The record gives the reactivity of an RNA of 170 nucleotides to DMS and 2A3. DMS (dimethyl sulfate) methylates the pairing face of unpaired adenines and cytosines. The reactions ran in a buffer of 150 mM KOAc, 10 mM MgCl2 and 150 mM bicine (pH 8.5), at 24 C. The DMS profile rests on 4,098 reads.

RNA sequence: GGGAACGACUCGAGUAGAGUCGAAAAAUAAGAUGGCGAGAUCUCCACUCAUUGGGUCCUUCGUCCAUCUCCUUUUCUUACCUUUGGCCGGCAUGGUCCCAGCCUCCUCGUCGGCGCCGGCCGGGCACGCCCCUGCCCUUCGGGGCAGGGAAAAGAAACAACAACAACAAC
Reactivity to DMS in 0.01 (KOAc 150mM, MgCl2 10mM, bicine 150mM(pH8.5), 24C), signal-to-noise 3, nucleotides 027 to 129: a080u030a040a060g000a040u000g050g000c090g000a090g040a240u000c130u030c020c060a000c250u100c280a130u010u020g050g010g010u010c100c070u010u030c090g030u080c010c010a040u030c030u030c210c060u000u000u040u010c040u000u050a140c150c030u020u060u010g040g060c060c060g010g040c020a000u150g020g010u040c040c050c000a090g010c050c000u070c020c020u030c010g020u040c000g020g040c090g110c000c000g020g070c000c010g050g000g060c150a030c000g030c050
Reactivity to 2A3 in 0.01 (KOAc 150mM, MgCl2 10mM, bicine 150mM(pH8.5), 24C), signal-to-noise 4, nucleotides 027 to 129: a000u170a010a000g020a000u010g000g000c000g000a010g000a070u030c150u060c110c000a070c080u230c070a220u170u250g000g000g040u050c070c020u130u060c040g040u050c000c000a000u010c020u050c000c010u030u060u000u020c050u020u110a080c050c000u120u090u120g020g000c000c000g000g010c030a110u120g100g020u050c000c010c000a010g000c010c010u070c000c050u050c040g130u030c030g050g000c010g000c000c000g000g000c000c000g000g000g000c060a030c020g050c020